Overview: Structure probing data (DMS) for a 177-nucleotide construct.

[RMDB]
RNA sequence: GGGAACGACUCGAGUAGAGUCGAAAAAUGUCGACAACUUGAUCAAAUGUUUGACUGUGGAUUUUUCUUUAGAACGGGUUGUCUGCUGCCUUGUUUUACAACAUUCAUAGUUCAGGACAGGUUUAACCGCCUAUAGCGUAUUCGUACGCUAUAGGCGAAAAGAAACAACAACAACAAC
Reactivity to DMS in 0.01 (KOAc 150mM, MgCl2 10mM, bicine 150mM(pH8.5), 24C), signal-to-noise 2, nucleotides 027 to 126: a040u040g010u000c110g000a070c070a030a040c070u000u010g010a100u000c030a090a120a110u010g010u000u000u000g010a040c050u010g040u010g010g000a080u040u000u000u010u000c110u020u000u000a050g010a040a040c010g020g000g030u000u000g000u000c110u000g010c120u000g000c000c000u010u000g000u000u010u000u010a060c250a030a040c160a040u000u020c070a020u010a090g010u000u000c080a100g000g000a010c020a090g000g020u010u000u050a110a150c180
It was measured as part of the RMDB library OK2TST.